Chemical mapping of a 207-nucleotide RNA with DMS and 2A3.
RNA sequence: GGGAACGACUCGAGUAGAGUCGAAAACGUUGUCAACGACAACACCCUAUGCAUUCAUGCUCUGUAAGGAUGCGCCGAAAGGUGAGCAAGCCCGAGUUGCCCAGACCUGAAAUGCAACACUUUAGAGAAAACCCGAAGCAGUUCGCUGCUUCGGGAAUCUUACGGACAAGUUCGCUUGUCCGUAAGAAAAAGAAACAACAACAACAAC
Reactivity to DMS in 0.01 (KOAc 150mM, MgCl2 10mM, bicine 150mM(pH8.5), 24C), signal-to-noise 1, nucleotides 027 to 156: c080g000u000u000g030u000c050a130a150c150g000a160c000a050a030c000a120c020c000c060u010a150u000g000c040a010u000u010c080a220u000g040c070u070c020u010g020u000a300a140g030g010a040u000g020c000g000c060c010g000a130a080a270g030g010u010g010a060g010c040a150a190g040c010c040c000g030a070g030u010u010g000c000c000c040a150g000a070c060c000u010g010a050a050a130u030g030c030a040a080c040a170c070u030u010u000a060g010a240g000a020a070a060a130c000c040c020g030a040a000g010c000a040g030u000u000c300g040c040u040g000c000u010u000c020g100g020g040a010a010
Reactivity to 2A3 in 0.01 (KOAc 150mM, MgCl2 10mM, bicine 150mM(pH8.5), 24C), signal-to-noise 2, nucleotides 027 to 156: c060g000u000u000g000u000c050a110a060c170g020a010c000a000a000c000a030c000c010c020u040a050u080g020c000a000u010u010c030a050u100g000c010u000c000u000g020u050a000a040g020g000a020u020g000c020g000c000c000g060a110a030a030g030g000u010g040a030g000c030a030a040g020c000c030c010g090a070g110u060u080g040c010c030c040a030g030a060c020c030u070g080a070a040a040u070g000c010a050a020c010a020c060u090u220u200a090g010a010g040a120a120a020a050c000c000c000g000a000a000g020c000a010g010u040u110c140g030c140u010g000c000u000u020c000g020g010g000a000a000
For DMS the reverse transcriptase was MarathonRT. For DMS, 1,507 sequencing reads were counted. In probing experiments dimethyl sulfate is read out at A N1 and C N3, which are open when not base-paired. For 2A3 the reverse transcriptase was SuperScript II with manganese. For 2A3, 1,130 sequencing reads were counted. As a SHAPE reagent, 2A3 marks flexible, mostly unpaired nucleotides at the ribose 2'-OH.